[RMDB]
RNA sequence: GGGAACGACUCGAGUAGAGUCGAAAAAUACAUUCCUGUGCCGGCAAUACAGUGUGUAUGGAGGUCUCAAUGGCUCGGAAGUGCCAGCAAACCGGCGCAGAUAUUAGCAGACGUAUGGGCGUAAGACAAAAGAGAAUGAUGUUCGCAUCAUUCUCAACACAAUAUGGAUCUUCGGAUCCAUAUUGUGAAAAGAAACAACAACAACAAC
Reactivity to DMS in 0.01 (KOAc 150mM, MgCl2 10mM, bicine 150mM(pH8.5), 24C), signal-to-noise 2, nucleotides 027 to 156: a140u010a080c030a130u000u010c180c000u000g000u010g010c000c000g010g040c020a030a100u010a070c030a160g010u030g010u000g020u000a050u000g020g000a080g010g000u000c030u000c080a100a130u000g000g030c040u000c030g050g020a190a190g020u000g020c010c010a110g000c070a040a210a040c020c040g020g030c020g030c010a030g000a090u010a030u000u010a080g020c060a080g000a050c060g020u010a040u000g000g000g020c040g020u000a060a100g000a110c040a040a050a060a180g000a010g020a040a000u000g000a020u000g020u000u000c300g010c010a030u000c000a040u000u010c010u000c000a020a080
Reactivity to 2A3 in 0.01 (KOAc 150mM, MgCl2 10mM, bicine 150mM(pH8.5), 24C), signal-to-noise 5, nucleotides 027 to 156: a000u130a010c040a060u070u050c010c000u000g010u010g010c020c010g030g000c050a040a030u070a110c070a110g140u030g030u010g020u260a050u080g020g010a050g050g050u050c030u010c070a090a160u080g000g000c030u040c080g080g070a090a070g040u020g050c000c010a010g030c090a040a050a060c000c020g000g000c020g010c000a000g020a010u080a070u050u150a030g030c060a020g000a060c040g060u080a080u160g010g040g010c020g020u050a050a020g050a050c080a050a080a010a020g010a000g000a000a000u000g000a000u000g040u040u090c210g010c070a000u000c000a000u000u000c000u000c000a000a000
Annotation:
Structure probing data (DMS and 2A3) for a 207-nucleotide construct. The 2A3 profile rests on 3,715 reads. The RNA was probed in 150 mM KOAc, 10 mM MgCl2 and 150 mM bicine (pH 8.5) at 24 C. It was measured as part of the RMDB library M2RFPK. The DMS profile rests on 4,137 reads. DMS adducts were read by reverse transcription with MarathonRT.